[RMDB]
This 177-nucleotide RNA was probed chemically with DMS and 2A3. Values cover nucleotides 27 to 126. Source: RMDB library OK1LIB, as collected in RNAgym. DMS adducts were read by reverse transcription with MarathonRT.
RNA sequence: GGGAACGACUCGAGUAGAGUCGAAAAUACAUCUUGCCGCCCGCGCGAAUCAUCGCGGGCAUCGAGGCGUCCACGAUCACAUCGCUCGGCGAGUGGAAGUUGGAGAUACCUCUGGCCGAAUCGACCACGUAGGUAUGCGAUUCGUCGCAUACCUACGAAAAGAAACAACAACAACAAC
Reactivity to DMS in 0.01 (KOAc 150mM, MgCl2 10mM, bicine 150mM(pH8.5), 24C), signal-to-noise 2, nucleotides 027 to 126: u050a150c050a070u090c040u000u000g000c050c160g000c000c000c000g010c040g000c300g000a140a130u090c150a140u010c000g000c010g020g010g050c000a000u000c040g000a040g010g040c110g000u000c060c000a080c070g000a120u000c100a060c020a180u030c030g000c020u010c050g010g050c000g000a000g000u000g000g000a070a100g000u010u010g000g000a090g000a020u070a080c000c020u000c000u040g030g040c010c060g000a060a050u000c050g000a070c020c070a170
Reactivity to 2A3 in 0.01 (KOAc 150mM, MgCl2 10mM, bicine 150mM(pH8.5), 24C), signal-to-noise 6, nucleotides 027 to 126: u150a010c040a060u050c030u070u070g060c020c040g000c000c000c000g000c010g020c020g180a200a140u210c120a030u090c050g000c010g000g020g000c000a010u010c010g010a020g000g030c030g080u020c000c000a030c010g030a080u150c050a030c040a100u040c010g020c040u110c110g160g000c030g020a010g000u030g010g030a070a050g040u160u130g040g040a090g010a040u120a100c010c000u000c010u030g080g000c020c030g040a050a110u120c030g050a040c020c020a080